[RMDB]
RNA sequence: GGGAACGACUCGAGUAGAGUCGAAAAUCUUGAUUGAAGAUGAAAUGGGUGAUCCGCAGCCAAGUCCUAAGGACGUAUAAUGUCUAUGGAUGCAGUUCAACGACUAGAUGGCAGUGGGUGUUGUUAAGACUUAGGUUUUUACAAUGCUUAAGGUAUACGGUACCUGAUUGUUCGCAAUCAGGUACCGAAAAGAAACAACAACAACAAC
Reactivity to 2A3 in 0.01 (KOAc 150mM, MgCl2 10mM, bicine 150mM(pH8.5), 24C), signal-to-noise 1, nucleotides 027 to 156: u040c040u090u250g060a160u060u130g040a070a010g040a020u170g030a090a150a110u150g010g000g100u020g020a110u110c020c060g000c000a000g020c000c010a000a020g070u030c000c000u070a100a140g000g010a000c010g090u090a070u060a140a190u250g000u000c080u050a020u030g030g000a000u070g060c010a010g010u080u060c060a140a030c000g070a020c020u000a040g010a130u030g070g010c030a000g000u020g040g000g030u000g020u020u000g000u000u030a070a050g010a000c070u010u010a000g000g070u000u000u060u150u010a090c080a080a020u080g000c000u000u000a000a000g000g080u040a090u080a110
Chemical mapping of a 207-nucleotide RNA with 2A3.
It was measured as part of the RMDB library ARCHII.
Conditions: 150 mM KOAc, 10 mM MgCl2 and 150 mM bicine (pH 8.5), 24 C.
The 2A3 profile rests on 456 reads.